The record gives the reactivity of an RNA of 177 nucleotides to 2A3 and DMS. 2A3 adducts were read by reverse transcription with SuperScript II with manganese. It was measured as part of the RMDB libraries RFM100 and RFMREP. Reactivities are given for positions 27 through 126.
[RMDB]
RNA sequence: GGGAACGACUCGAGUAGAGUCGAAAAUGUCGGGUAAGUUCCGACCUGCACGAAUCGUGAAACGAGUUGGGCACUGUCUCAACCAGGCGCUCAGUGAAAUUGUAGUGGCGGUGAAGAUGCCGCCUACAUCCUUCGAGAACUUCGGUUCUCGAAGGAUAAAAGAAACAACAACAACAAC
Reactivity to 2A3 in 0.01 (KOAc 150mM, MgCl2 10mM, bicine 150mM(pH8.5), 24C), signal-to-noise 3, nucleotides 027 to 126: u150g010u000c000g000g020g070u130a140a100g040u110u120c000c000g000a010c050c020u040g040c030a010c010g070a050a150u040c000g000u070g100a080a060a120c090g010a050g080u060u000g010g010g000c040a050c300u030g040u160c000u020c070a020a040c010c010a020g040g000c060g000c070u010c020a030g010u020g060a010a070a140u180u110g060u060a040g080u050g060g050c040g010g010u080g070a110a060g120a140u210g040c010c000g010c020c000u000a000c030
Reactivity to DMS in 0.01 (KOAc 150mM, MgCl2 10mM, bicine 150mM(pH8.5), 24C), signal-to-noise 3, nucleotides 027 to 126: u020g020u010c030g000g010g040u000a050a110g010u030u050c020c000g000a010c040c050u010g030c000a050c030g010a040a030u000c030g010u000g000a140a190a080c140g010a150g000u030u000g030g000g000c010a120c060u000g000u000c030u030c280a100a110c200c060a020g000g000c100g010c070u020c010a090g000u010g050a120a100a070u010u000g000u000a100g000u010g000g000c010g030g030u000g000a200a090g010a130u010g000c000c020g000c000c010u000a010c060